Structure probing data (2A3 and DMS) for a 177-nucleotide construct. The reactions ran in a buffer of 150 mM KOAc, 10 mM MgCl2 and 150 mM bicine (pH 8.5), at 24 C. For 2A3, 8,456 sequencing reads were counted. 2A3 adducts were read by reverse transcription with SuperScript II with manganese.
RNA sequence: GGGAACGACUCGAGUAGAGUCGAAAAGAACAGAGUGCCGCACUGGCUGCCCUGAUGAGAACACACCCGUGACUAGCGUCGAAACAUCAACAGUGCGGGCUGUUGGUGUCGGGAGCCACUAAAAGAAACCAUUACUAGUCUUCGGACUAGUAAUGGUAAAAGAAACAACAACAACAAC
Reactivity to 2A3 in 0.01 (KOAc 150mM, MgCl2 10mM, bicine 150mM(pH8.5), 24C), signal-to-noise 7, nucleotides 027 to 126: g050a040a010c050a040g080a010g100u070g060c030c020g030c020a030c060u040g050g000c040u070g060c030c010c010u080g040a090u080g050a040g070a080a000c030a000c000a030c050c020c030g040u040g050a080c070u100a040g030c020g090u080c050g120a160a090a060c010a030u060c010a010a010c000a010g010u030g120c010g010g100g000c010u010g010u040u010g010g000u020g020u040c060g010g010g020a010g020c020c010a020c030u120a050a110a040a020g140a060a090
Reactivity to DMS in 0.01 (KOAc 150mM, MgCl2 10mM, bicine 150mM(pH8.5), 24C), signal-to-noise 5, nucleotides 027 to 126: g000a050a140c080a030g000a090g020u010g020c020c040g000c040a060c050u010g000g000c030u010g010c040c010c040u000g020a060u010g000a130g000a090a080c100a070c140a090c080c070c020g000u010g000a080c070u020a070g010c120g000u010c040g000a120a070a040c010a030u000c010a020a030c010a010g010u020g010c150g000g000g000c020u000g000u000u000g010g000u000g010u000c060g020g000g000a080g010c020c020a040c090u020a050a060a080a070g020a110a140